An RNA of 177 nucleotides, treated with 2A3 and DMS and read out base by base. Conditions: 150 mM KOAc, 10 mM MgCl2 and 150 mM bicine (pH 8.5), 24 C. Values cover nucleotides 27 to 126.

RNA sequence: GGGAACGACUCGAGUAGAGUCGAAAACUCCAGACGGGACCUCGGAGAGAUCAUGCAACUGCGCCGGGAACUGGGCGCUCCCGGCCCGUUCGAGCGGACGGCGAUGUGAUCGGUCGCGAGGAACGGGGAUAUCGACUAAUUUCGAUUAGUCGAUAUCAAAAGAAACAACAACAACAAC
Reactivity to 2A3 in 0.01 (KOAc 150mM, MgCl2 10mM, bicine 150mM(pH8.5), 24C), signal-to-noise 9, nucleotides 027 to 126: c010u010c000c010a040g040a170c050g010g030g110a050c010c010u020c030g020g010a050g000a000g000a050u040c010a020u090g070c050a080a070c100u090g030c050g010c100c000g030g030g020a020a030c040u160g040g070g000c030g000c000u020c010c000c000g010g000c000c000c000g000u000u020c030g040a070g080c050g010g010a010c010g020g020c030g060a110u150g050u060g080a080u020c010g010g210u080c100g000c000g140a020g000g030a010a010c010g010g000g040
Reactivity to DMS in 0.01 (KOAc 150mM, MgCl2 10mM, bicine 150mM(pH8.5), 24C), signal-to-noise 9, nucleotides 027 to 126: c080u010c010c040a170g010a160c070g010g000g010a130c030c020u000c030g010g010a130g010a180g000a030u000c030a040u000g000c140a110a090c100u000g010c100g010c000c000g010g010g010a040a040c050u010g030g000g010c040g010c090u000c010c010c000g000g010c010c000c010g010u000u000c020g000a220g010c050g010g000a060c010g000g010c090g010a130u010g010u000g010a040u000c000g000g000u000c010g010c000g000a140g010g000a070a070c020g000g000g010
Background:
Source: RMDB library OK2TRN, as collected in RNAgym.